Annotation: The record gives the reactivity of an RNA of 207 nucleotides to 2A3. The RNA was probed in 150 mM KOAc, 10 mM MgCl2 and 150 mM bicine (pH 8.5) at 24 C. The data come from the RNA Mapping Database (RMDB), library OK3TST. For 2A3 the reverse transcriptase was SuperScript II with manganese.
RNA sequence: GGGAACGACUCGAGUAGAGUCGAAAAGCUGACGGAACCUUACGAAUUCCCUUGCCAAUUUAUCCCCAUCGUUCCGGUAUGGGGGAAUAUCGAGAAUAUUGAUGGCAGUGAUUACUGGUCGGGCAUGGUGCGUUUUGGUAAGGACCAGCAGCGCCUACCGGUGCGUAGCUUUCGAGCUACGCACCGGAAAAGAAACAACAACAACAAC
Reactivity to 2A3 in 0.01 (KOAc 150mM, MgCl2 10mM, bicine 150mM(pH8.5), 24C), signal-to-noise 1, nucleotides 027 to 156: g000c000u000g050a080c000g000g050a000a180c040c010u020u020a000c060g070a000a010u030u210c000c000c000u000u010g000c000c000a170a110u010u170u220a180u210c050c000c040c000a090u000c000g150u080u040c140c000g000g010u060a000u140g180g030g000g000g000a000a000u010a000u000c040g040a040g070a300a110u080a150u250u230g010a000u000g010g100c060a040g080u020g200a090u200u160a110c140u070g060g120u090c170g150g000g050c000a000u050g010g010u170g070c200g060u000u000u000u110g180g020u000a020a020g040g000a040c000c000a000g000c000a000g000c000g040c080c000u080a040